[RMDB]
RNA sequence: GGGAACGACUCGAGUAGAGUCGAAAACUACAACAACCCUAGAUGCAACCAAGGAAAUACAGAGAAGGUCGGUGACUUGCCUCAGGUCACACAGCAAUGCACAGCUAGGAGAGAGACUUUCACCUCCCCACAGCUCCGGGUUCUAGGACUGCAGGUACUACGUAAAUCCAUUCGUGGAUUUACGUAGAAAAGAAACAACAACAACAAC
Reactivity to DMS in 0.01 (KOAc 150mM, MgCl2 10mM, bicine 150mM(pH8.5), 24C), signal-to-noise 2, nucleotides 027 to 156: c060u000a080c110a110a110c050a060a110c070c000c010u010a070g060a150u000g000c050a100a150c120c030a100a100g010g000a040a080a300u000a090c050a070g030a100g010a020a030g000g010u010c060g040g030u000g000a060c000u000u000g020c130c030u010c030a070g000g010u010c020a020c030a090c140a070g050c090a090a090u000g020c030a080c020a040g000c090u000a050g020g000a060g000a140g010a170g000a060c060u000u000u000c060a050c030c010u000c000c020c000c030a080c030a050g050c030u000c000c020g020g010g010u010u010c020u000a050g000g010a020c030u000g050c000a060g020g030u020a150
Reactivity to 2A3 in 0.01 (KOAc 150mM, MgCl2 10mM, bicine 150mM(pH8.5), 24C), signal-to-noise 4, nucleotides 027 to 156: c030u100a040c020a180a010c000a010a080c020c020c010u080a080g030a130u100g050c030a010a050c030c010a040a040g030g010a060a080a040u110a080c050a020g060a000g040a130a030g070g030u110c090g040g000u040g000a020c030u030u080g080c030c060u140c040a010g000g000u020c010a000c010a010c010a030g050c050a070a050u140g020c020a030c020a060g010c020u060a030g030g020a020g010a010g000a000g030a050c000u050u090u050c150a090c020c010u030c010c010c000c000a070c000a010g000c010u000c010c010g020g020g000u060u070c020u060a010g000g010a010c000u020g030c020a000g010g040u070a020